RNA sequence: GGGAACGACUCGAGUAGAGUCGAAAAGAUGGGAUGGUUGGAGAAGACCAAGGAUGACAUCUCAAGUCUAUGGAGGAGAGGAGAGACAAAUGGACAAAGCUGGGAAAUGGAAAGCGGCUGGACACUGGACAUAGACAUUCGACCAGGCACAGUGUGAACUCGAGUAUAAUUUCGAUUAUACUCGAGUAAAAGAAACAACAACAACAAC
Reactivity to 2A3 in 0.01 (KOAc 150mM, MgCl2 10mM, bicine 150mM(pH8.5), 24C), signal-to-noise 4, nucleotides 027 to 156: g080a040u100g000g000g020a010u030g010g060u060u060g000g030a090g030a090a010g020a040c010c030a030a020g100g020a080u090g020a020c010a090u070c050u020c100a100a060g010u000c010u070a080u140g050g010a030g030g000a010g020a020g000g020a040g000a000g020a020c030a020a130a040u120g020g000a010c030a050a060a000g010c050u050g000g030g020a030a080a070u090g010g000a060a020a010g030c030g020g000c020u020g030g010a030c030a010c050u010g010g000a010c020a040u050a030g060a050c010a040u130u090c070g040a050c010c030a010g010g050c040a020c020a060g020u030g030u100g090a030
Reactivity to DMS in 0.01 (KOAc 150mM, MgCl2 10mM, bicine 150mM(pH8.5), 24C), signal-to-noise 1, nucleotides 027 to 156: g000a070u010g010g020g010a090u000g000g000u000u010g020g010a100g030a090a100g000a120c040c050a090a100g000g060a120u020g030a060c050a160u000c020u000c040a050a190g000u000c030u010a150u000g010g000a050g040g000a080g010a070g020g020a150g000a050g020a100c060a010a080a080u000g010g010a080c020a080a070a130g000c070u000g040g020g010a040a020a070u020g020g010a060a040a090g020c070g010g040c020u020g010g000a060c070a070c030u000g020g010a100c010a070u000a100g000a070c060a130u000u000c070g030a090c000c000a080g000g040c050a100c010a050g000u000g000u000g000a100